[RMDB]
RNA sequence: GGGAACGACUCGAGUAGAGUCGAAAAGGCUGAUUCGUCAGCCGAAAAACCUUUGUGGAUACGGGAGCAGUUAAAAUCGAGGUCUGCCCAUUGGGCAGACUCCCCACCGAUCCGCGAAGAACGUAUCCACUCUGGUGAGUUAGCUAUUCGUAGCUAAGUAAUUGUACCGUUUCGACGGUACAAUUACAAAAGAAACAACAACAACAAC
Reactivity to 2A3 in 0.01 (KOAc 150mM, MgCl2 10mM, bicine 150mM(pH8.5), 24C), signal-to-noise 3, nucleotides 027 to 156: g000g000c010u020g030a050u040u110c180g050u020c100a010g000c010c020g000a030a000a000a000a000c000c010u000u000u000g000u010g000g000a000u010a000c010g010g020g040a030g000c020a060g080u240u300a110a100a010a020u020c010g030a020g020g010u000c000u000g030c000c060c100a260u070u300g000g000g000c010a000g010a010c010u050c020c020c000c000a040c010c010g000a010u040c100c080g010c010g030a120a050g010a030a000c000g000u000a000u000c000c000a010c000u000c000u000g000g020u050g040a110g060u070u070a000g000c010u010a050u100u140c220g160u060a020g000c010u010a070a040
Reactivity to DMS in 0.01 (KOAc 150mM, MgCl2 10mM, bicine 150mM(pH8.5), 24C), signal-to-noise 2, nucleotides 027 to 156: g010g000c000u000g010a020u000u000c270g030u000c000a040g030c010c000g030a010a030a050a130a030c040c000u000u000u000g030u000g020g000a020u000a030c020g000g000g000a210g000c040a100g020u020u020a040a050a090a170u000c030g010a210g020g020u000c010u010g000c000c010c030a300u030u000g040g030g040c000a000g000a030c000u000c050c020c000c100a150c100c020g010a100u010c040c040g050c070g000a130a180g020a070a180c000g010u000a020u000c000c000a010c020u010c020u010g000g060u000g010a070g020u010u000a080g030c020u000a060u000u010c190g040u000a020g030c030u000a030a220